Chemical mapping of a 177-nucleotide RNA with 2A3. It was measured as part of the RMDB library RFM100. 2A3 adducts were read by reverse transcription with SuperScript II with manganese. Values cover nucleotides 27 to 126. The 2A3 profile rests on 1,088 reads.
[RMDB]
RNA sequence: GGGAACGACUCGAGUAGAGUCGAAAAACCGAGCGUCCGUGCCAAGCGCUGCGUCACCAGGGGAUGACUGUCGGAAGAUGGUCAGUCCCGGGUGCAUAAGGAGUGGUGGAUGGUUCAGGACCGAAAGCAUGGCGACGAGAUUCGUCUCGUCGCCAUGAAAAGAAACAACAACAACAAC
Reactivity to 2A3 in 0.01 (KOAc 150mM, MgCl2 10mM, bicine 150mM(pH8.5), 24C), signal-to-noise 1, nucleotides 027 to 126: a000c000c010g030a110g000c030g000u030c000c000g000u020g040c000c000a000a010g090c000g000c050u030g000c010g100u030c000a000c000c000a000g040g000g020g000a010u020g000a000c000u000g000u000c010g030g120a040a040g000a050u100g000g000u000c000a000g160u070c010c000c000g000g020g000u000g000c020a070u180a220a080g220g020a050g000u040g010g020u020g030g170a100u020g030g000u000u020c060a130g050g010a000c000c000g010a000a050a000g170